The record gives the reactivity of an RNA of 207 nucleotides to DMS and 2A3. 2A3 adducts were read by reverse transcription with SuperScript II with manganese. The 2A3 profile rests on 4,396 reads. The DMS profile rests on 2,522 reads. DMS adducts were read by reverse transcription with MarathonRT. Conditions: 150 mM KOAc, 10 mM MgCl2 and 150 mM bicine (pH 8.5), 24 C.
RNA sequence: GGGAACGACUCGAGUAGAGUCGAAAACCAAAUCACUUCGGUGAUUUGGAAAAAUCCUAAGUCCGAGCGAAGAACGGAUACGACGAUCUAUCGGAAACGAUAGGGAGUUAUCCGGGAGCUCGGAUAUGGAAAAAAGACAUGUGUUCGCACAUGUCAAUCAGUAUGUAUGGUUCGCCAUACAUACUGAAAAAGAAACAACAACAACAAC
Reactivity to DMS in 0.01 (KOAc 150mM, MgCl2 10mM, bicine 150mM(pH8.5), 24C), signal-to-noise 2, nucleotides 027 to 156: c010c000a000a000a000u000c010a000c010u010u010c300g050g060u010g020a020u000u000u000g020g000a010a000a050a060a190u000c010c040u000a110a150g010u010c000c010g000a020g000c020g030a130a170g030a220a150c060g000g000a040u000a030c060g020a030c000g020a300u000c000u000a020u000c000g000g020a270a110a240c020g000a000u010a010g040g000g000a300g050u000u000a050u000c000c010g000g000g000a300g000c010u000c010g030g000a000u010a020u000g000g000a000a070a020a230a170a090g020a020c000a010u000g030u010g010u000u010c300g050c010a020c000a020u000g010u000c000a010a070
Reactivity to 2A3 in 0.01 (KOAc 150mM, MgCl2 10mM, bicine 150mM(pH8.5), 24C), signal-to-noise 3, nucleotides 027 to 156: c000c000a000a000a010u000c000a010c010u050u080c250g120g000u000g000a000u000u000u020g000g020a000a010a020a070a070u050c020c000u030a090a030g010u000c000c000g000a010g010c010g130a300a050g030a120a010c010g020g000a020u040a060c230g060a020c010g010a070u010c000u010a010u000c000g080g040a140a050a040c010g000a000u010a010g000g000g010a040g000u020u000a010u010c000c010g020g000g000a010g000c000u000c000g000g010a000u000a000u000g010g020a030a050a020a030a020a070g000a000c010a010u020g020u000g020u090u170c280g050c110a010c000a000u000g000u000c000a000a070